[RMDB]
RNA sequence: GGGAACGACUCGAGUAGAGUCGAAAAUCUGUGAACCCUGUCAGGUCCGGAAGGAAGCAGCAGUAAGCAGAACCUCUCAUGUGCCAUGGGGUCGCCUGAACCGAGCUAACUGCUUAAGUAACGCCUGGGGUGGCUAAUCGACAGAAGGUGCACGGUACCUUCCCUAGUAGUUCGCUACUAGGGAAGGAAAAGAAACAACAACAACAAC
Reactivity to 2A3 in 0.01 (KOAc 150mM, MgCl2 10mM, bicine 150mM(pH8.5), 24C), signal-to-noise 3, nucleotides 027 to 156: u010c000u020g010u010g040a040a040c000c020c000u010g030u040c020a050g000g040u020c030c030g060g090a070a060g010g020a020a040g020c050a000g030c000a010g060u010a020a020g020c020a000g020a110a070c000c000u020c000u010c030a080u130g080u110g090c060c030a140u100g030g000g000g070u060c020g030c040c020u030g050a080a040c060c020g040a020g040c010u040a020a080c000u030g000c020u050u050a090a020g030u040a100a050c080g010c020c010u040g010g000g040g040u050g000g020c000u040a130a110u110c050g010a020c010a010g050a110a070g080g000u010g040c000a000c000g050g000u020a010
Reactivity to DMS in 0.01 (KOAc 150mM, MgCl2 10mM, bicine 150mM(pH8.5), 24C), signal-to-noise 1, nucleotides 027 to 156: u000c020u010g000u000g020a020a020c000c020c000u000g000u010c030a270g010g030u010c010c020g020g050a100a120g010g010a140a250g050c030a050g020c000a090g030u000a070a140g050c000a120g000a060a060c060c000u000c020u030c040a100u000g010u020g020c090c020a250u000g050g000g030g030u000c020g040c030c030u030g000a030a150c090c060g010a140g050c030u000a060a110c020u000g010c020u000u010a040a130g030u000a050a090c030g000c010c040u010g030g020g020g000u000g010g040c060u000a030a080u000c040g010a050c010a020g010a090a130g010g010u000g000c030a030c030g020g030u000a140
Background: Chemical mapping of a 207-nucleotide RNA with 2A3 and DMS. The DMS profile rests on 2,711 reads.